[RMDB]
RNA sequence: GGGAACGACUCGAGUAGAGUCGAAAACAAGCGAUCUUGACGACCCAACCGACACGAAGGCGUUUCUUUCAGAGGUGACAAACACCGAUACUGACGCAAUAGCAACGAUAUUCUGGCUUCAUGGCGGCGAAGAGAGUCUUCCAGGGUAUGAACAGGCUCAAGCUAGUUGAUUCGUCAACUAGCUUGAAAAAGAAACAACAACAACAAC
Reactivity to DMS in 0.01 (KOAc 150mM, MgCl2 10mM, bicine 150mM(pH8.5), 24C), signal-to-noise 1, nucleotides 027 to 156: c100a170a170g040c020g050a040u000c070u010u000g070a220c130g040a180c020c010c080a080a060c140c000g020a060c040a000c020g000a090a070g050g050c000g000u010u000u000c000u030u000u000c040a030g000a120g020g030u010g020a190c090a170a060a300c040a120c020c000g000a230u000a240c090u000g000a120c130g000c090a110a080u000a120g010c030a040a050c040g010a100u000a090u010u000c110u000g010g030c070u010u000c020a070u000g000g010c000g030g000c030g000a070a060g000a120g000a090g040u040c060u020u010c050c050a140g010g060g000u000a100u020g000a220a050c070a040g030g000c050
Reactivity to 2A3 in 0.01 (KOAc 150mM, MgCl2 10mM, bicine 150mM(pH8.5), 24C), signal-to-noise 2, nucleotides 027 to 156: c050a010a030g050c020g150a110u040c040u070u130g070a090c030g060a050c050c010c020a010a030c020c020g090a030c000a010c100g060a030a010g080g000c050g000u060u130u000c030u040u070u020c020a020g010a060g080g010u000g000a050c100a100a140a040c040a080c010c030g010a050u010a110c010u060g070a010c040g010c090a080a040u140a030g000c040a110a030c040g020a020u010a040u160u050c080u040g090g010c040u090u050c100a070u140g100g000c000g020g010c030g040a080a010g070a010g000a000g090u030c030u030u000c010c010a030g020g000g030u020a060u100g080a000a080c070a060g070g030c000

Conditions: 150 mM KOAc, 10 mM MgCl2 and 150 mM bicine (pH 8.5), 24 C. This 207-nucleotide RNA was probed chemically with DMS and 2A3. For DMS, 1,511 sequencing reads were counted. The 2A3 profile rests on 1,036 reads. Source: RMDB library OK3TST, as collected in RNAgym.